[RMDB]
RNA sequence: GGGAACGACUCGAGUAGAGUCGAAAAGUGGCCUCGAAGUACUUGCGCGUCGUCGCGAGCGCGUCGGCGACGAGCUUGCCGAUCGCGCGGUACUCCCAGUACGGGAAGAGGCGGCUCGCGGCGAUCAACCACUCAUGAGGUUCGCCUCAUGAGUGGUAAAAGAAACAACAACAACAAC
Reactivity to DMS in 0.01 (KOAc 150mM, MgCl2 10mM, bicine 150mM(pH8.5), 24C), signal-to-noise 2, nucleotides 027 to 126: g050u010g010g000c000c010u010c030g010a210a080g000u000a010c010u000u000g070c000g020c020g010u000c020g010u000c160g030c020g010a030g010c020g020c020g000u000c000g020g000c190g010a010c010g000a060g030c030u000u000g010c040c020g000a020u010c110g030c000g000c020g010g000u000a030c010u000c010c000c010a150g010u000a160c210g000g000g000a100a120g000a040g000g000c000g050g010c020u000c050g030c030g000g020c030g010a100u000c110a140
Reactivity to 2A3 in 0.01 (KOAc 150mM, MgCl2 10mM, bicine 150mM(pH8.5), 24C), signal-to-noise 2, nucleotides 027 to 126: g070u040g120g000c000c000u000c010g030a090a000g010u020a020c050u180u300g040c010g000c030g040u030c010g070u070c050g050c030g010a010g020c000g000c010g010u010c000g120g300c110g020a010c000g000a020g010c000u000u010g020c000c000g060a170u140c070g010c010g000c030g010g000u010a000c010u020c000c000c000a080g070u180a110c210g000g000g000a030a060g020a010g040g000c050g030g020c040u030c010g070c020g000g040c020g040a070u080c050a020